[RMDB]
RNA sequence: GGGAACGACUCGAGUAGAGUCGAAAACUCGAAUCUUUCGAGAUUCGAGACUCUCGAAGUGUCAAUAAGAUCGAAAAGAUGGCCGAGCAUAAAAUAGACACAAUGCUGCUUGAUUCGUCAAGCAGAAGUUCAACUCUAGGUUCGCCUAGAGUUGAACAAAAGAAACAACAACAACAAC
Reactivity to DMS in 0.01 (KOAc 150mM, MgCl2 10mM, bicine 150mM(pH8.5), 24C), signal-to-noise 2, nucleotides 027 to 126: c020u000c000g020a020a000u010c010u000u020u020c160g000a010g000a030u010u000c000g000a030g000a070c070u010c030u000c000g010a160a130g010u000g020u000c030a100a090u000a090a110g000a050u000c020g000a080a050a040a100g000a080u010g020g010c110c020g000a060g000c130a080u000a060a080a090a130u000a060g000a030c030a040c040a110a170u010g000c010u000g000c000u010u010g000a000u000u010c200g060u000c000a030a000g000c010a000g000a030a080
Reactivity to 2A3 in 0.01 (KOAc 150mM, MgCl2 10mM, bicine 150mM(pH8.5), 24C), signal-to-noise 3, nucleotides 027 to 126: c010u000c010g000a020a000u000c020u060u110u160c190g090a010g000a010u010u000c000g020a010g020a020c030u010c000u010c030g100a300a100g000u000g020u050c020a030a040u100a140a040g040a110u070c040g070a100a080a120a090g090a100u060g090g000c060c020g040a010g000c050a070u150a140a160a050a040u110a090g030a000c000a010c000a020a080u150g020c010u000g000c000u000u000g020a020u070u040c200g020u010c110a010a000g000c000a000g020a020a010

Source information: Source: RMDB library M2PK50, as collected in RNAgym. This 177-nucleotide RNA was probed chemically with DMS and 2A3. The DMS profile rests on 1,404 reads. Values cover nucleotides 27 to 126. The RNA was probed in 150 mM KOAc, 10 mM MgCl2 and 150 mM bicine (pH 8.5) at 24 C.